[RMDB]
Chemical mapping of a 207-nucleotide RNA with 2A3 and DMS. 2A3 adducts were read by reverse transcription with SuperScript II with manganese. The reactions ran in a buffer of 150 mM KOAc, 10 mM MgCl2 and 150 mM bicine (pH 8.5), at 24 C.
RNA sequence: GGGAACGACUCGAGUAGAGUCGAAAAAACACUAUGGGUGGGGCACUCCUUUCUUGCACUAUUCCACAGGGAUACCUUAAUUCUUUGUUUCCUCUUUACCUGUUCAAAAUUCCAUUUACUUGAUCAUUCUCAGUAUCCACUGUCUAUGUACAAUAAAAAUACUCCUAUAUUUCGAUAUAGGAGUAUUAAAAGAAACAACAACAACAAC
Reactivity to 2A3 in 0.01 (KOAc 150mM, MgCl2 10mM, bicine 150mM(pH8.5), 24C), signal-to-noise 2, nucleotides 027 to 156: a000a000c060a010c020u060a070u080g020g000g010u000g010g000g020g020c000a030c050u050c020c000u040u090u120c040u000u080g000c030a020c070u080a060u150u060c060c010a000c050a070g040g000g010a020u050a070c000c010u070u050a090a050u150u050c010u030u050u040g040u000u030u030c020c000u060c050u050u050u060a040c010c030u030g070u100u030c030a020a080a070a170u070u000c010c000a010u010u060u100a080c020u010u080g040a050u090c010a050u070u050c070u010c040a020g000u020a070u050c050c030a050c070u030g020u010c010u060a080u090g030u010a030c030a090a110u100a230a050a000
Reactivity to DMS in 0.01 (KOAc 150mM, MgCl2 10mM, bicine 150mM(pH8.5), 24C), signal-to-noise 3, nucleotides 027 to 156: a060a030c030a070c090u000a060u010g010g000g050u020g010g030g030g030c040a070c050u000c040c030u020u000u000c030u000u000g000c030a090c060u010a120u010u000c040c040a080c030a110g010g010g020a130u000a040c040c040u000u000a060a100u000u000c060u000u000u000g010u010u010u000c030c010u000c060u000u000u000a050c040c020u000g000u010u000c050a040a080a060a130u000u000c020c010a130u010u010u000a050c050u000u000g020a140u000c010a050u010u000c030u010c020a080g040u000a140u000c070c070a100c010u000g020u000c040u010a060u010g020u010a080c040a050a090u020a020a070a090
Reactivities are given for positions 27 through 156. For 2A3, 1,149 sequencing reads were counted. The data come from the RNA Mapping Database (RMDB), library OK3TST. For DMS the reverse transcriptase was MarathonRT.